[RMDB]
RNA sequence: GGGAACGACUCGAGUAGAGUCGAAAAUUUAACAUAUUGCCUCAUUUCAUAAUCUCCCUUCAUUGAGAUCAUUUGUAUAAGCAAAACAUGUUACAUGACAGUCUUUGGAAGACUGAAUAGGCGCCACUAAAUUGUGCAGUUUAGAGGGCUCUAGGCAGCUAUGCGUGGAUUUCGAUCCACGCAUAGCAAAAGAAACAACAACAACAAC
Reactivity to 2A3 in 0.01 (KOAc 150mM, MgCl2 10mM, bicine 150mM(pH8.5), 24C), signal-to-noise 2, nucleotides 027 to 156: u030u010u030a040a010c010a000u060a030u100u000g050c040c050u110c040a070u000u130u060c060a040u070a230a020u030c100u030c040c050c010u090u050c050a090u040u200g030a010g000a060u020c010a010u070u020u110g060u000a110u080a140a000g080c000a010a000a030a010c060a050u030g000u020u000a010c000a090u080g060a080c000a000g000u020c000u020u230u250g150g100a020a000g000a010c060u010g000a000a000u030a000g100g040c020g070c060c000a000c000u040a150a000a000u120u080g090u050g120c070a030g010u010u010u010a110g080a200g040g000g000c000u030c010u000a040g050g060c090a050

The data come from the RNA Mapping Database (RMDB), library OK3TST. Chemical mapping of a 207-nucleotide RNA with 2A3. For 2A3, 765 sequencing reads were counted.